RNA sequence: GGGAACGACUCGAGUAGAGUCGAAAAGCCCAUAUGUUCGCAUAUGGGCAAAAGCAGAACUGAGCAUGCGAGCUCUCUGCGACAAAAGUCAACGCAAUAAAAAAACACGUCACUUCGGUGACGUGAAGAAAUGUAUUUACUUCGGUAAAUACAUUUCAAAAGAAACAACAACAACAAC
Reactivity to 2A3 in 0.01 (KOAc 150mM, MgCl2 10mM, bicine 150mM(pH8.5), 24C), signal-to-noise 9, nucleotides 027 to 126: g000c010c000c000a000u010a000u000g010u000u060c210g000c120a000u020a000u010g000g000g000c030a040a040a010a010g000c000a000g010a100a060c130u180g000a010g010c020a030u130g060c050g070a040g010c000u000c000u000c000u010g000c010g010a030c060a020a190a020a000g110u120c050a060a090c040g020c060a070a080u230a230a150a030a000a000a010a010c010a000c000g000u000c000a000c010u030u070c220g060g000u010g000a000c000g000u000g000a010a000
Reactivity to DMS in 0.01 (KOAc 150mM, MgCl2 10mM, bicine 150mM(pH8.5), 24C), signal-to-noise 6, nucleotides 027 to 126: g000c000c000c000a010u000a000u000g000u000u020c190g030c010a000u010a000u010g000g000g020c000a010a010a050a110g000c000a010g010a180a120c210u010g010a010g030c010a040u010g020c060g020a170g000c000u000c010u000c000u000g010c010g000a100c170a040a050a070a110g020u010c130a050a100c040g010c050a100a110u060a020a010a060a060a070a110a160c000a000c000g010u000c000a010c000u000u010c170g010g010u000g000a000c000g010u000g000a030a070